Description
The record gives the reactivity of an RNA of 177 nucleotides to DMS and 2A3. For 2A3, 1,769 sequencing reads were counted. The data come from the RNA Mapping Database (RMDB), library OK2TST.

[RMDB]
RNA sequence: GGGAACGACUCGAGUAGAGUCGAAAAGACACUGGUGGGCGUGGUGGAUGCCGAUCUGGGGCUUGCCAAUGGCGAUCCGCGCGCGGCCGAACGCACGUUCCAGUUGCUCAAUCAGGUCACGGGCCGAUCAAAAUCAGUGGUUCGCCACUGAUUUUGAAAAAGAAACAACAACAACAAC
Reactivity to DMS in 0.01 (KOAc 150mM, MgCl2 10mM, bicine 150mM(pH8.5), 24C), signal-to-noise 3, nucleotides 027 to 126: g010a060c070a080c020u010g010g020u000g020g020g020c010g030u000g010g040u010g020g010a120u010g020c010c010g000a050u010c070u000g010g010g010g000c080u000u000g010c020c060a100a110u040g020g020c020g000a050u000c040c050g020c090g010c110g030c030g010g030c020c060g010a120a070c150g000c040a050c050g010u000u000c030c020a040g000u010u010g010c020u010c020a080a110u000c100a070g020g010u000c040a090c130g010g010g030c010c040g010a120
Reactivity to 2A3 in 0.01 (KOAc 150mM, MgCl2 10mM, bicine 150mM(pH8.5), 24C), signal-to-noise 2, nucleotides 027 to 126: g040a010c020a000c130u020g000g020u030g040g100g000c010g030u040g010g070u020g050g100a100u130g000c030c030g030a030u030c050u070g020g010g090g030c020u030u050g030c020c040a170a130u170g010g000c020g060a030u000c000c000g100c040g000c030g000c020g050g000c000c000g050a090a000c040g000c060a020c030g010u120u000c010c000a020g010u080u160g000c000u040c000a080a120u060c060a090g000g010u030c000a010c160g010g090g020c020c020g000a030